An RNA of 207 nucleotides, treated with 2A3 and DMS and read out base by base. The reactions ran in a buffer of 150 mM KOAc, 10 mM MgCl2 and 150 mM bicine (pH 8.5), at 24 C.

RNA sequence: GGGAACGACUCGAGUAGAGUCGAAAAAAGACCGAGAGGUUCAAGCUUAUAGGGCAGAAAGCGGGGGACAGCAGUACUAAACAUGCCCUGUGGCUGAGACGAAGGUAGUACUCCAACAGCGUCUCAAAAAAGCAGCAGUCCUUCGGGACUGCUGCAACACAUAUGUUACCUUCGGGUAACAUAUGUGAAAAGAAACAACAACAACAAC
Reactivity to 2A3 in 0.01 (KOAc 150mM, MgCl2 10mM, bicine 150mM(pH8.5), 24C), signal-to-noise 2, nucleotides 027 to 156: a000a030g030a010c010c010g030a040g010a020g130g020u100u070c050a050a000g010c010u140u150a020u060a070g000g020g000c030a010g130a100a120a030g070c080g000g000g000g030g010a010c010a020g020c040a030g060u090a040c060u130a060a130a050c050a030u050g000c000c000c020u000g010u010g010g030c010u010g000a000g000a000c010g010a050a010g060g010u030a040g040u030a050c030u020c060c020a040a040c010a070g070c010g000u000c000u000c000a060a080a010a010a000a000g000c010a000g000c000a010g000u010c010c010u020u050c110g010g000g010a000c000u000g000c000u010g000c000a000a000
Reactivity to DMS in 0.01 (KOAc 150mM, MgCl2 10mM, bicine 150mM(pH8.5), 24C), signal-to-noise 1, nucleotides 027 to 156: a140a080g000a070c010c020g020a170g000a150g020g000u050u000c020a130a120g000c030u000u010a050u000a050g030g050g080c060a100g000a120a100a040g020c090g010g040g050g040g010a110c070a110g030c040a040g030u010a060c010u010a070a030a140c070a160u020g030c010c030c020u000g100u000g030g040c040u010g000a070g000a020c020g000a100a090g040g010u010a040g000u000a020c040u000c010c020a030a020c040a200g030c030g030u000c000u000c030a000a070a070a090a020a080g030c000a020g010c000a020g000u000c000c000u000u050c300g070g060g010a010c010u010g000c010u020g000c000a030a060